[RMDB]
RNA sequence: GGGAACGACUCGAGUAGAGUCGAAAACAAGAUGGUCCAAGCGCUCGGUGGUGUCGAGGUGUGCAGCACCACGCCGCUGCGCGACUACGAAAUCGGCGCGGUGCUCGAACACGCUGGACGCCAGGUGGCCGGGUACUGGAUUCGUCCAGUACCCGGCAAAAGAAACAACAACAACAAC
Reactivity to 2A3 in 0.01 (KOAc 150mM, MgCl2 10mM, bicine 150mM(pH8.5), 24C), signal-to-noise 2, nucleotides 027 to 126: c100a120a080g040a170u260g020g020u030c010c010a000a100g020c010g010c060u010c080g040g170u080g000g030u000g020u030c070g160a120g060g000u000g000u000g050c030a000g000c000a020c000c010a040c020g000c000c020g000c020u080g040c100g030c070g100a050c070u160a040c000g150a070a110a090u040c000g000g000c000g000c000g010g010u000g000c000u010c030g050a080a000c000a000c000g070c010u060g140g010a000c000g000c000c000a060g110g040u140g060